[RMDB]
RNA sequence: GGGAACGACUCGAGUAGAGUCGAAAAUGGCAUGAUCUCGGCUCACUGCAACUUCCACCUGCCUGGUUCAAGCGAUUCUCCUGCCUCAGUGUCCCCCGGUAGUUGGGAUUACAGGUAUAUACCACCAUGCCUGGCUAAUUUUUGUAUUUUUAGUAGAAAUUAUCGAGUAGUUCGCUACUCGAUAAUUAAAAGAAACAACAACAACAAC
Reactivity to DMS in 0.01 (KOAc 150mM, MgCl2 10mM, bicine 150mM(pH8.5), 24C), signal-to-noise 2, nucleotides 027 to 156: u000g000g000c030a060u000g010a110u000c040u000c040g040g010c030u010c040a070c050u010g000c010a050a060c050u000u000c030c010a080c050c020u000g020c020c030u010g010g010u000u000c070a050a160g020c040g000a130u000u000c010u010c030c040u010g030c040c000u010c030a080g030u000g000u010c010c020c000c020c050g010g030u000a040g010u000u010g020g010g010a100u000u000a030c020a020g020g030u000a060u000a110u010a090c020c000a070c030c020a070u000g010c000c010u010g000g000c020u010a030a040u010u000u010u000u000g010u000a030u020u000u010u000u020a070g010u010a130g000a090
Reactivity to 2A3 in 0.01 (KOAc 150mM, MgCl2 10mM, bicine 150mM(pH8.5), 24C), signal-to-noise 3, nucleotides 027 to 156: u080g040g030c010a020u040g040a070u070c060u030c050g030g000c030u040c050a050c030u030g030c020a050a040c030u090u020c030c030a040c010c020u040g030c010c020u050g020g030u060u140c100a110a010g040c030g080a100u110u020c030u030c050c040u040g040c020c000u060c080a070g040u040g040u180c010c000c000c000c010g040g000u040a040g010u050u050g010g020g000a020u030u070a030c010a010g000g050u020a030u010a010u030a140c020c030a010c000c020a010u010g010c000c000u000g020g010c020u050a030a090u030u050u030u030u070g040u030a130u040u090u020u030u070a050g040u050a040g070a070
Chemical mapping of a 207-nucleotide RNA with DMS and 2A3. Reactivities are given for positions 27 through 156. The DMS profile rests on 8,926 reads. DMS adducts were read by reverse transcription with MarathonRT. In probing experiments dimethyl sulfate is read out at A N1 and C N3, which are open when not base-paired.